[RMDB]
RNA sequence: GGGAACGACUCGAGUAGAGUCGAAAAUACUAGUUCCUUAGCUUAUUACGAACCUGUGCAGGGUCGUAAAAUGCUGAUGGCUCUUCUUUCUGAUAAUGCCUAUCUCAAAUGGGCGCGUGUUGAAGGUACAGUUUGCCCUUCGGGGCAAACAAAAGAAACAACAACAACAAC
Reactivity to DMS in 0.01 (KOAc 150mM, MgCl2 10mM, bicine 150mM(pH8.5), 24C), signal-to-noise 1, nucleotides 027 to 129: u080a100c120u020a100g000u000u000c010c020u000u000a020g020c000u000u020a170u000u040a000c040g050a060a110c010c010u000g000u060g060c230a170g030g030g010u060c020g000u010a000a000a030a060u060g040c010u010g040a020u040g000g000c040u010c010u000u030c020u000u000u050c030u070g000a060u050a060a060u050g010c010c000u000a040u030c110u050c130a040a090a040u020g000g000g000c000g020c180g010u040g040u000u000g010a040a060g000g020u020a100c150a110
Reactivity to 2A3 in 0.01 (KOAc 150mM, MgCl2 10mM, bicine 150mM(pH8.5), 24C), signal-to-noise 2, nucleotides 027 to 129: u300a040c140u090a030g020u000u000c000c000u000u000a000g000c000u000u000a000u060u000a020c000g010a100a080c020c000u100g120u220g070c300a100g000g000g000u020c000g020u060a010a000a000a080u120g000c000u000g000a060u160g140g000c010u040c040u110u060c000u000u120u040c020u000g110a130u000a300a090u160g000c020c000u010a020u010c110u000c040a080a250a180u000g010g000g000c000g040c030g010u030g000u000u010g050a010a040g000g000u020a000c020a020